[RMDB]
RNA sequence: GGGAACGACUCGAGUAGAGUCGAAAACACGCAAAUAUGUGUCAUAGUCUAGGGUUUCGAGCUUGUGGUCGUUCAGGCUUCGGUUUGAUCGGGAUUCAAAUUUGCGAGAUGGCGCUGACGUGGCAUCGAGGGGACGUCAGUUCGCUGACGUCCCCUCAAAAGAAACAACAACAACAAC
Reactivity to 2A3 in 0.01 (KOAc 150mM, MgCl2 10mM, bicine 150mM(pH8.5), 24C), signal-to-noise 3, nucleotides 027 to 126: c120a010c060g130c220a060a180a070u290a110u230g040u020g010u050c010a040u070a110g040u000c100u150a060g000g130g000u030u040u060c030g000a010g010c010u040u090g060u100g020g090u070c040g020u050u030c010a000g030g000c010u050u050c200g020g010u020u000u000g000a000u000c010g020g020g050a100u040u000c030a020a070a120u110u110u160g050c040g010a040g030a060u050g070g040c110g000c080u060g040a050c020g020u020g000g030c000a040u060c100
An RNA of 177 nucleotides, treated with 2A3 and read out base by base. It was measured as part of the RMDB library OK1LIB. Values cover nucleotides 27 to 126. The reactions ran in a buffer of 150 mM KOAc, 10 mM MgCl2 and 150 mM bicine (pH 8.5), at 24 C.